[RMDB]
RNA sequence: GGGAACGACUCGAGUAGAGUCGAAAAGGCUGACCGAACGCUGUUUGCACUCCGACCCGCCGACGUUGCAGGAGGUGUCCACGGCCCGCCGGCUGGUUCGCGAGCGGCUCGAGCCCGCACUGCGCACAUGAAUGGAAAUCUUCGGAUUUCCAUUCAUAAAAGAAACAACAACAACAAC
Reactivity to DMS in 0.01 (KOAc 150mM, MgCl2 10mM, bicine 150mM(pH8.5), 24C), signal-to-noise 6, nucleotides 027 to 126: g010g020c020u000g000a120c060c020g000a070a100c100g000c040u000g010u000u000u000g020c040a160c050u000c090c060g000a090c040c020c060g010c030c020g000a030c040g000u000u010g030c030a080g010g000a100g010g010u000g000u000c030c040a130c110g000g000c030c210c020g010c030c020g000g010c020u000g010g010u000u010c080g020c090g000a050g030c040g000g000c050u000c060g010a120g000c030c010c030g000c100a090c060u000g000c060g030c080a080c160
Reactivity to 2A3 in 0.01 (KOAc 150mM, MgCl2 10mM, bicine 150mM(pH8.5), 24C), signal-to-noise 2, nucleotides 027 to 126: g050g000c020u030g030a110c030c050g040a150a020c070g020c070u040g070u120u120u140g030c040a040c050u040c010c000g040a050c020c010c010g000c010c000g010a040c020g060u110u190g010c010a020g020g070a060g040g110u080g130u050c060c030a060c090g100g000c020c020c010g000c010c000g000g030c010u040g000g030u070u070c020g010c040g040a020g000c010g020g000c010u040c040g030a030g000c040c010c000g030c010a080c050u150g010c030g040c030a050c030
Structure probing data (DMS and 2A3) for a 177-nucleotide construct. As a SHAPE reagent, 2A3 marks flexible, mostly unpaired nucleotides at the ribose 2'-OH. The data come from the RNA Mapping Database (RMDB), library OK2TRN. For DMS the reverse transcriptase was MarathonRT. For 2A3 the reverse transcriptase was SuperScript II with manganese.